[RMDB]
RNA sequence: GGGAACGACUCGAGUAGAGUCGAAAAGUGCUACCGAGAACUUGAUGGUUGCUCGGCUCUUUAGCGGGGCCUGGUUGACCCAUCUGGGGUAUUCACCGGAUGCGUGGUCUGCCCCGGCCUGAGCGGGCAAAAUGCUCGUGUUCGCACGAGCAUUUUGAAAAGAAACAACAACAACAAC
Reactivity to DMS in 0.01 (KOAc 150mM, MgCl2 10mM, bicine 150mM(pH8.5), 24C), signal-to-noise 4, nucleotides 027 to 126: g020u020g010c050u010a110c020c020g000a100g000a040a050c050u000u010g000a150u020g020g010u010u000g000c010u000c010g010g030c020u000c000u010u000u020a070g030c020g000g000g000g020c000c220u010g000g020u030u020g020a020c020c010c010a020u000c000u010g000g010g010g030u030a100u040u030c150a150c000c030g010g000a010u000g010c300g000u050g010g000u010c000u010g010c040c000c030c040g010g000c020c030u000g000a050g020c020g000g000g010
Reactivity to 2A3 in 0.01 (KOAc 150mM, MgCl2 10mM, bicine 150mM(pH8.5), 24C), signal-to-noise 6, nucleotides 027 to 126: g080u090g000c060u090a060c000c020g010a010g010a020a040c070u200u260g110a150u300g180g030u020u140g080c010u010c000g070g010c020u000c000u020u070u070a050g010c000g000g010g000g010c000c040u100g080g040u090u090g030a010c010c020c000a000u010c000u010g020g020g000g050u170a250u120u290c120a130c100c000g000g000a000u010g060c130g140u150g010g000u000c020u020g010c010c000c000c020g010g010c000c010u030g020a030g030c020g000g030g000

This 177-nucleotide RNA was probed chemically with DMS and 2A3. For 2A3 the reverse transcriptase was SuperScript II with manganese. For 2A3, 3,962 sequencing reads were counted. Reactivities are given for positions 27 through 126. DMS adducts were read by reverse transcription with MarathonRT.